An RNA of 177 nucleotides, treated with DMS and 2A3 and read out base by base.
Source: RMDB library OK2TRN, as collected in RNAgym.
The RNA was probed in 150 mM KOAc, 10 mM MgCl2 and 150 mM bicine (pH 8.5) at 24 C.
DMS adducts were read by reverse transcription with MarathonRT.
Values are in units of 0.01, from 0 to 300, in steps of 10.
Reactivities are given for positions 27 through 126.
[RMDB]
RNA sequence: GGGAACGACUCGAGUAGAGUCGAAAAUGAUGUCGGCUGCUGGCCUCGAAGCGCACCGCCAGGCCAAGGCCAGCGCGCUGGCCGAGCUUGUGGCGAACACCACCGACGACGACAUCAAGGCGCACGCCACCUCAGAAUGCUUCGGCAUUCUGAGGUGAAAAGAAACAACAACAACAAC
Reactivity to DMS in 0.01 (KOAc 150mM, MgCl2 10mM, bicine 150mM(pH8.5), 24C), signal-to-noise 3, nucleotides 027 to 126: u000g010a030u010g010u000c010g030g000c060u010g050c050u010g020g010c020c030u000c090g010a180a050g020c020g000c070a150c130c180g010c030c060a070g000g020c020c040a100a080g000g000c000c050a060g020c090g040c240g000c020u010g010g020c050c020g010a090g020c030u000u010g010u000g010g000c040g010a100a120c230a130c020c010a070c030c090g000a070c040g040a070c030g000a020c020a010u000c020a080a080g000g000c040g030c130a090c200g010c120
Reactivity to 2A3 in 0.01 (KOAc 150mM, MgCl2 10mM, bicine 150mM(pH8.5), 24C), signal-to-noise 2, nucleotides 027 to 126: u040g030a010u040g000u020c030g000g040c040u060g020c030u080g100g000c030c000u040c030g060a080a040g040c030g000c040a040c090c030g070c050c030a040g000g040c010c010a020a060g020g000c010c010a010g000c200g030c010g000c010u040g020g000c020c000g000a010g010c010u050u060g060u030g080g020c100g110a080a000c060a030c050c020a000c030c010g300a300c030g000a040c010g020a010c290a000u050c030a000a050g050g000c040g000c020a010c050g050c010